[RMDB]
RNA sequence: GGGAACGACUCGAGUAGAGUCGAAAAGAUAUGGAGGUGAACUACAGGGAGUAUGUGGAGCUUGGAUUUAGGUCUCGGAAACGAGACCUUGUCAGCUCCAUGAAACCUGCACCUCCUAAGUCAAAUCGUAUUAUGCCGUUCGCGGCAUAAUACGAAAGACUCUACACACGUUCGCGUGUGUAGAGUCAAAAGAAACAACAACAACAAC
Reactivity to 2A3 in 0.01 (KOAc 150mM, MgCl2 10mM, bicine 150mM(pH8.5), 24C), signal-to-noise 2, nucleotides 027 to 156: g040a030u040a040u120g000g000a000g010g010u030g040a130a110c080u170a060c300a050g000g050g030a020g020u040a060u300g020u040g000g000a000g010c040u120u120g150g000a050u300u230u100a010g010g030u000c000u000c000g020g040a050a050a020c010g000a000g000a000c040c000u000u000g000u000c000a000g000c000u000c000c010a010u000g000a010a010a000c000c000u000g000c000a000c000c000u000c000c000u010a060a010g010u040c030a000a000a090u020c000g000u010a000u020u000a010u000g000c000c000g010u050u060c300g020c010g130g000c010a000u000a000a000u000a000c000g000a000a000a000